[RMDB]
RNA sequence: GGGAACGACUCGAGUAGAGUCGAAAAGCCGAAGAGUUCGCUCUUCGGCGACGAAUUUGCCGUAGAUGAGAGUCUACAGUACUAGCCAUCCCAGAUGUACAAAUAAGCAUUGCUUCGGCAAUGCUAACCAGUAAGUUCCGUUCGCGGAACUUACUGGAAAAGAAACAACAACAACAAC
Reactivity to 2A3 in 0.01 (KOAc 150mM, MgCl2 10mM, bicine 150mM(pH8.5), 24C), signal-to-noise 2, nucleotides 027 to 126: g000c010c010g010a000a020g000a000g110u130u190c200g010c150u000c000u010u000c000g010g120c010g030a000c000g050a030a190u100u060u140g060c030c010g020u020a020g010a070u040g050a030g020a020g080u050c040u000a030c010a020g010u020a020c050u050a030g100c030c020a040u010c030c000c010a050g010a240u200g000u050a060c050a070a060a060u180a210a010g000c000a000u000u000g000c000u010u050c170g070g000c000a010a010u010g000c010u010a000a050
Reactivity to DMS in 0.01 (KOAc 150mM, MgCl2 10mM, bicine 150mM(pH8.5), 24C), signal-to-noise 1, nucleotides 027 to 126: g000c000c000g000a000a010g010a020g030u000u000c200g030c000u000c000u000u010c000g030g000c000g010a020c060g010a100a150u000u020u000g000c010c010g000u020a000g000a050u000g010a300g010a160g000u010c010u000a010c010a070g010u000a030c170u000a120g000c070c090a150u000c000c000c000a210g000a070u000g010u000a090c150a000a080a080u000a070a070g000c040a000u000u000g000c000u000u030c080g020g000c010a000a000u000g010c000u000a000a020